About this RNA: This 207-nucleotide RNA was probed chemically with 2A3 and DMS. It was measured as part of the RMDB library OK3TST. 2A3 adducts were read by reverse transcription with SuperScript II with manganese.
[RMDB]
RNA sequence: GGGAACGACUCGAGUAGAGUCGAAAAUGAGGAACAAACCGCAUUGACCGAUCACGGCGACCGUGCGGAUGCCGAGGAGGACGACCAAUGAGUAAAGAUAAAAUGAGACAUGAUUACUUAACAUGUUCCGAGUGUUCGCGUUCUAAUGCGGUCACGGAUCAUUAAUAGGUUUCGACCUAUUAAUGAUAAAAGAAACAACAACAACAAC
Reactivity to 2A3 in 0.01 (KOAc 150mM, MgCl2 10mM, bicine 150mM(pH8.5), 24C), signal-to-noise 8, nucleotides 027 to 156: u140g020a040g050g040a070a060c040a060a090a020c020c000g000c010a000u010u040g020a030c000c010g020a040u070c040a040c080g050g010c040g060a070c050c020g050u100g030c070g020g040a030u080g010c020c010g020a050g040g050a020g010g010a020c020g040a040c020c070a040a100u110g010a020g060u100a070a100a030g080a060u150a100a100a050a090u200g040a060g030a080c020a020u060g030a170u110u140a110c070u120u090a090a030c020a040u040g020u080u020c020c020g020a030g010u020g010u010u040c010g000c050g050u070u010c070u200a030a020u050g000c000g000g010u010c010a010c040g060g030
Reactivity to DMS in 0.01 (KOAc 150mM, MgCl2 10mM, bicine 150mM(pH8.5), 24C), signal-to-noise 6, nucleotides 027 to 156: u010g010a080g010g010a060a120c100a080a120a110c010c010g020c000a040u010u000g020a070c050c020g000a090u000c050a090c030g030g000c040g000a090c060c030g010u000g020c050g010g000a110u000g020c030c000g010a130g030g010a160g020g020a080c040g000a080c030c030a080a100u010g000a090g010u000a050a060a080g010a160u010a040a040a070a120u000g010a150g000a080c040a040u010g010a170u000u000a090c100u000u010a060a120c020a100u000g000u000u000c000c010g010a120g020u000g010u000u000c010g010c060g010u010u000c100u000a050a070u000g010c010g010g010u000c020a050c050g010g000